An RNA of 177 nucleotides, treated with 2A3 and DMS and read out base by base. The RNA was probed in 150 mM KOAc, 10 mM MgCl2 and 150 mM bicine (pH 8.5) at 24 C. The DMS profile rests on 2,858 reads. It was measured as part of the RMDB library OK2TST. For 2A3 the reverse transcriptase was SuperScript II with manganese.

RNA sequence: GGGAACGACUCGAGUAGAGUCGAAAACACGAAUGAGAAGCUGCGCAGGUUGGCGUUUACCGCCUUCACCUCGUCCACCAACUUCACCACCGCGUCGAUGGUCCAAAUGUCGAGCGACCUGGCCGCGACCCAGAAGAUGUUUCGACAUCUUCUGGGUAAAAGAAACAACAACAACAAC
Reactivity to 2A3 in 0.01 (KOAc 150mM, MgCl2 10mM, bicine 150mM(pH8.5), 24C), signal-to-noise 3, nucleotides 027 to 126: c050a000c030g070a090a100u170g020a070g020a170a030g010c050u050g000c070g050c070a040g000g040u060u050g020g010c030g020u070u130u100a090c070c000g000c000c000u050u050c040a040c010c000u020c010g030u000c020c000a040c010c020a070a050c010u020u030c010a030c080c020a050c030c010g020c010g060u040c050g070a060u100g000g050u020c040c000a080a110a120u260g070u170c070g020a030g080c060g010a020c000c000u010g060g000c020c010g030c000g040
Reactivity to DMS in 0.01 (KOAc 150mM, MgCl2 10mM, bicine 150mM(pH8.5), 24C), signal-to-noise 3, nucleotides 027 to 126: c080a130c070g010a090a080u010g000a110g000a080a080g010c050u000g000c120g000c050a040g010g030u010u000g000g000c010g020u000u000u000a100c220c040g010c010c010u000u000c160a070c030c020u000c070g000u010c050c020a110c240c050a050a060c070u000u000c030a080c030c040a070c100c020g000c040g010u000c040g010a070u010g000g000u000c020c040a060a080a130u010g040u000c090g000a080g020c110g000a020c020c060u000g010g000c000c010g000c070g000